[RMDB]
RNA sequence: GGGAACGACUCGAGUAGAGUCGAAAAAGCCAGGAUACGUCCUGGCAAUACAACUAAUAGAAUGUUGCUCAAAUGAGUGGCUAACACCACAAAGGGGCGCACAUAAACUGCCUACGGCAUGAGUAGCAGCGCCAUGUGAAAAUGUCGGAAAGCUAGGCUGGAGAGCAAAAAUUCGACCCAAACAGUUUUAGCUGUGGAAAUGUUUGUAGAGGUACAGGCUGUCGAAGAUUAUGUAGUGGGCUGUAUAAGAUGGCGUACGCGCCAUCAACCAGUGAUUCGUCACUGGUAAAAGAAACAACAACAACAAC
Reactivity to DMS in 0.01 (KOAc 150mM, MgCl2 10mM, bicine 150mM(pH8.5), 24C), signal-to-noise 2, nucleotides 027 to 266: a080g010c000c000a020g010g000a050u000a090c130g090u050c000c000u000g010g030c000a040a020u000a150c110a090a130c080u000a140a140u020a100g020a160a090u010g000u000u000g020c000u020c010a050a110a100u010g000a300g010u000g000g000c040u010a170a110c210a300c000c010a020c010a090a130a130g000g020g010g010c050g030c120a040c110a060u010a040a120a130c130u010g010c010c010u000a140c040g020g000c010a020u000g000a070g000u000a090g010c010a020g010c160g020c160c160a060u000g010u000g000a090a070a130a000u010g000u010c010g000g000a130a130a100g000c100u020a040g020g000c020u000g000g030a070g000a060g020c020a020a050a090a110a110u000u040c060g010a050c060c050c060a060a060a050c040a000g000u000u050u010u000a060g020c020u000g000u000g000g000a050a060a040u010g000u000u000u010g020u000a020g010a090g000g000u000a030c040a060g000g000c030u010g010u000c000g010a030a050g000a050u010u010a080u010g010u000a100g030u000g000g010g010c050u010g000u000a050u060a050a140g010a000u000g000g010c000g000u000a100c200g030c040g040c000c000a000u000c000a130
Reactivity to 2A3 in 0.01 (KOAc 150mM, MgCl2 10mM, bicine 150mM(pH8.5), 24C), signal-to-noise 2, nucleotides 027 to 266: a050g000c010c010a010g000g000a020u070a040c140g070u000c010c000u000g030g100c000a000a000u000a010c000a000a010c020u160a000a180u120a270g130a170a120u090g050u110u180g000c010u090c050a270a300a050u090g040a040g030u000g020g000c030u040a050a000c030a010c050c000a020c020a030a110a020g020g010g040g050c060g010c000a000c050a040u140a020a160a030c050u080g010c000c010u010a000c000g010g000c010a000u010g000a000g000u020a000g000c060a000g050c050g080c060c090a040u020g030u000g010a050a010a000a000u000g030u050c010g000g040a130a020a000g010c010u030a040g000g020c040u020g030g080a060g050a020g130c010a020a040a010a030a000u040u030c000g000a050c020c030c000a060a130a000c030a040g050u130u160u280u300a010g030c010u010g000u010g020g050a120a170a100u140g030u020u010u010g020u020a060g030a030g180g060u050a040c010a010g000g020c000u020g040u000c000g000a040a000g010a070u200u090a030u230g060u040a060g030u080g010g060g000c090u020g010u040a040u020a180a000g000a040u010g010g000c040g070u010a010c220g100c010g040c000c020a020u000c000a020
Annotation: Chemical mapping of a 307-nucleotide RNA with DMS and 2A3. Reactivities are given for positions 27 through 266. The RNA was probed in 150 mM KOAc, 10 mM MgCl2 and 150 mM bicine (pH 8.5) at 24 C.